[RMDB]
RNA sequence: GGGAACGACUCGAGUAGAGUCGAAAAACAUUCAUGAUGGAUCACUUCGCGAUCAGUAUGGCGGGGGUACCACCGGGAUGAAAAUCAUCGAAGAACGGAUAUUCGCCCGGAUCCAGCGUACGGAUCAUAAAUGAUAGCCUUUCGAGGCUAUCAUUUAAAAAGAAACAACAACAACAAC
Reactivity to DMS in 0.01 (KOAc 150mM, MgCl2 10mM, bicine 150mM(pH8.5), 24C), signal-to-noise 3, nucleotides 027 to 126: a110c080a060u000u000c090a090u010g020a080u010g010g010a070u000c070a130c120u000u010c060g010c060g020a050u000c050a090g020u000a020u000g010g050c010g010g000g010g010g000u010a100c150c180a200c040c010g020g000g000a050u010g000a030a020a110a020u000c020a050u020c070g000a120a100g010a100a130c160g000g010a020u010a110u000u000c030g000c000c020c000g000g000a050u010c010c020a080g020c060g010u000a030c030g000g010a010u000c030a180
Reactivity to 2A3 in 0.01 (KOAc 150mM, MgCl2 10mM, bicine 150mM(pH8.5), 24C), signal-to-noise 2, nucleotides 027 to 126: a000c060a060u100u130c030a060u150g090a040u100g070g030a060u080c040a020c210u070u080c130g000c040g100a020u030c050a040g110u120a080u060g280g000c040g010g120g010g030g020u050a070c030c000a040c030c010g010g000g010a040u080g010a060a030a000a030u050c070a010u070c050g060a100a070g100a300a030c050g070g010a030u020a050u070u050c010g030c000c010c010g010g000a000u020c040c020a000g000c000g030u070a020c010g030g010a000u020c000a020
This 177-nucleotide RNA was probed chemically with DMS and 2A3. For DMS, 3,267 sequencing reads were counted. 2A3 adducts were read by reverse transcription with SuperScript II with manganese.